This 177-nucleotide RNA was probed chemically with DMS and 2A3. As a SHAPE reagent, 2A3 marks flexible, mostly unpaired nucleotides at the ribose 2'-OH. For 2A3 the reverse transcriptase was SuperScript II with manganese. Source: RMDB library OK1LIB, as collected in RNAgym. Conditions: 150 mM KOAc, 10 mM MgCl2 and 150 mM bicine (pH 8.5), 24 C. For DMS, 1,993 sequencing reads were counted.
RNA sequence: GGGAACGACUCGAGUAGAGUCGAAAACGCCGGCACGGGCGGUGACGGCGGUGUUGGCGGGACCGGUGCGGCCGGCGGGAAAGGCGGGGCCGGCGGUAGCGGCGGCGUCAACGGCGCCACCGGCGCCGUCUGAAUGUGCAUUCGUGCACAUUCAGACAAAAGAAACAACAACAACAAC
Reactivity to DMS in 0.01 (KOAc 150mM, MgCl2 10mM, bicine 150mM(pH8.5), 24C), signal-to-noise 1, nucleotides 027 to 126: c030g000c030c020g020g020c020a070c040g030g000g020c130g010g000u000g000a070c070g000g050c030g050g020u010g030u010u000g000g010c010g000g000g000a120c010c010g010g020u030g040c000g000g000c010c000g010g000c000g010g000g000a070a080a090g000g000c010g000g000g010g000c010c000g000g010c000g000g050u000a030g020c010g010g090c170g010g020c040g010u000c050a010a130c150g000g000c010g110c040c030a100c100c050g000g020c060g080c060c060
Reactivity to 2A3 in 0.01 (KOAc 150mM, MgCl2 10mM, bicine 150mM(pH8.5), 24C), signal-to-noise 4, nucleotides 027 to 126: c020g000c000c000g020g000c020a040c090g120g150g050c120g100g000u030g030a050c040g010g040c040g030g290u040g010u010u030g020g010c020g010g000g060a100c000c010g000g110u040g020c060g060g010c040c020g000g000c070g020g020g010a140a170a040g090g010c090g010g050g060g000c000c000g000g020c060g040g010u030a030g070c000g030g000c020g050g090c030g010u030c010a020a030c070g050g030c000g000c020c020a090c080c080g060g000c040g030c030c050